[RMDB]
RNA sequence: GGGAACGACUCGAGUAGAGUCGAAAAGAAAGAGAGUUAGACACGGUUGAUCUCACCCUUCGGGGGGGCUAUAGAGAUCACUGGAAGCACUACCUGACAACCGGAACAUUGCAGCAAUGCAGCCCAAAAAAUCCAAACAUCUUCGGAUGUUUGGAAACAAUCAAAAUGGGUUCGCCCAUUUUGAUUGAAAAGAAACAACAACAACAAC
Reactivity to DMS in 0.01 (KOAc 150mM, MgCl2 10mM, bicine 150mM(pH8.5), 24C), signal-to-noise 2, nucleotides 027 to 156: g000a080a070a110g000a120g020a110g000u000u000a050g000a210c060a170c010g010g000u010u030g030a080u000c000u000c000a210c000c000c010u000u000c200g030g020g050g010g020g030g000c030u000a170u000a130g020a080g010a060u000c010a040c030u000g000g010a120a110g020c050a080c000u010a070c010c020u020g000a120c040a060a130c050c000g000g000a080a150c090a080u010u010g040c010a090g030c090a140a090u010g020c030a090g000c040c010c010a010a000a050a080a070a100u000c000c000a000a000a040c000a010u000c000u010u020c250g060g030a010u010g010u010u000u000g010g000a000a040a050
Reactivity to 2A3 in 0.01 (KOAc 150mM, MgCl2 10mM, bicine 150mM(pH8.5), 24C), signal-to-noise 4, nucleotides 027 to 156: g080a000a120a020g070a010g020a000g030u100u090a040g040a070c030a010c090g020g020u050u180g000a010u010c010u010c010a040c000c010c070u080u150c200g070g000g010g000g000g000g000c040u090a080u120a200g010a010g000a000u010c010a000c010u010g010g040a030a020g020c020a010c070u050a060c040c010u050g030a070c040a070a070c030c040g040g030a040a040c020a040u060u120g020c010a010g000c010a030a060u050g000c000a010g020c020c010c000a040a130a050a040a000a020u000c010c000a010a000a000c010a000u000c010u070u060c130g100g000a000u000g000u000u000u000g000g010a000a000a000
Source: RMDB library M2RFPK, as collected in RNAgym.
The record gives the reactivity of an RNA of 207 nucleotides to DMS and 2A3.
Conditions: 150 mM KOAc, 10 mM MgCl2 and 150 mM bicine (pH 8.5), 24 C.
The 2A3 profile rests on 2,656 reads.
For DMS, 2,469 sequencing reads were counted.